[RMDB]
RNA sequence: GGGAACGACUCGAGUAGAGUCGAAAAGGACAAUAGUCCAACGAUAGAAACUGGAUAAGCUAUACGCACGAACGGAUAGAGACGACUACGGUAGCGAGUAGCAUUGCCAUGCAGUAAUGCAGUCGUGGUAUGUACUAAGUUUCGACUUAGUACAUACAAAAGAAACAACAACAACAAC
Reactivity to 2A3 in 0.01 (KOAc 150mM, MgCl2 10mM, bicine 150mM(pH8.5), 24C), signal-to-noise 8, nucleotides 027 to 126: g030g000a030c040a060a300u130a150g020u000c000c000a000a010c020g030a010u050a100g130a030a070a010c030u010g020g030a040u030a080a020g010c010u020a000u020a050c020g020c010a040c030g030a090a010c010g000g020a020u040a040g080a010g010a020c020g020a020c020u060a010c030g040g010u030a020g010c010g030a030g030u050a020g000c030a040u000u100g000c010c010a070u230g030c020a020g030u060a050a050u020g000c010a010g030u020c000g020u020g060
Reactivity to DMS in 0.01 (KOAc 150mM, MgCl2 10mM, bicine 150mM(pH8.5), 24C), signal-to-noise 9, nucleotides 027 to 126: g010g010a020c020a130a120u030a080g000u000c000c010a090a090c070g000a050u010a050g010a100a130a090c110u010g010g000a060u030a060a120g010c030u000a020u010a080c030g000c010a060c070g000a090a100c050g000g010a080u000a060g010a100g000a060c070g000a050c020u020a040c040g000g010u020a070g010c030g000a290g020u010a070g010c020a040u000u000g000c020c030a110u010g010c090a070g000u020a040a040u010g000c000a110g010u000c020g010u000g010
The record gives the reactivity of an RNA of 177 nucleotides to 2A3 and DMS. The DMS profile rests on 31,262 reads. Conditions: 150 mM KOAc, 10 mM MgCl2 and 150 mM bicine (pH 8.5), 24 C. For 2A3, 33,795 sequencing reads were counted. The data come from the RNA Mapping Database (RMDB), library OK1LIB.